[RMDB]
RNA sequence: GGGAACGACUCGAGUAGAGUCGAAAAACAAGAAGUUCAUCUUACAGGCUUUCCGUGGUAUCGGUAAGUCGUUCAUCACAUGUGCGUUCGUUGUGUGGUCCUUAUGGAGAGACCCUCAGUUGAAGAUACUUAUCGUAUCAGCCUCUAAGGAGCGUGCCGUGUGUCUAAGUUUCGACUUAGACACACGAAAAGAAACAACAACAACAAC
Reactivity to 2A3 in 0.01 (KOAc 150mM, MgCl2 10mM, bicine 150mM(pH8.5), 24C), signal-to-noise 4, nucleotides 027 to 156: a020c140a060a030g140a090a010g080u150u130c060a120u010c080u070u140a080c060a120g050g000c030u060u030u040c050c030g030u070g080g070u240a230u300c030g010g000u050a040a010g010u000c020g030u080u160c040a100u050c020a070c040a150u130g080u080g040c040g040u050u050c010g000u060u110g030u020g060u090g040g030u040c020c020u130u120a100u210g180g050a070g000a040g000a080c010c020c000u030c020a090g020u120u130g070a050a020g000a010u010a040c020u170u160a120u190c100g000u000a000u020c020a050g040c020c000u000c010u060a060a080g080g000a020g010c030g000u040g000c070
Reactivity to DMS in 0.01 (KOAc 150mM, MgCl2 10mM, bicine 150mM(pH8.5), 24C), signal-to-noise 2, nucleotides 027 to 156: a110c070a090a170g010a100a140g020u000u010c110a120u000c020u010u000a120c100a160g010g020c060u000u000u020c000c000g030u020g020g010u010a060u000c060g020g010u000a010a020g010u000c020g030u030u000c030a140u020c010a160c130a110u010g040u000g000c030g050u000u000c050g050u010u000g040u010g030u000g020g010u000c010c050u010u030a110u000g050g020a150g010a130g030a050c020c010c000u000c020a070g020u000u000g020a120a060g010a070u000a010c010u000u000a070u000c190g010u010a000u000c000a060g020c030c000u000c040u000a060a060g040g010a060g030c050g010u000g020c060

Conditions: 150 mM KOAc, 10 mM MgCl2 and 150 mM bicine (pH 8.5), 24 C. The record gives the reactivity of an RNA of 207 nucleotides to 2A3 and DMS. For 2A3, 1,605 sequencing reads were counted. For 2A3 the reverse transcriptase was SuperScript II with manganese. The DMS profile rests on 3,878 reads.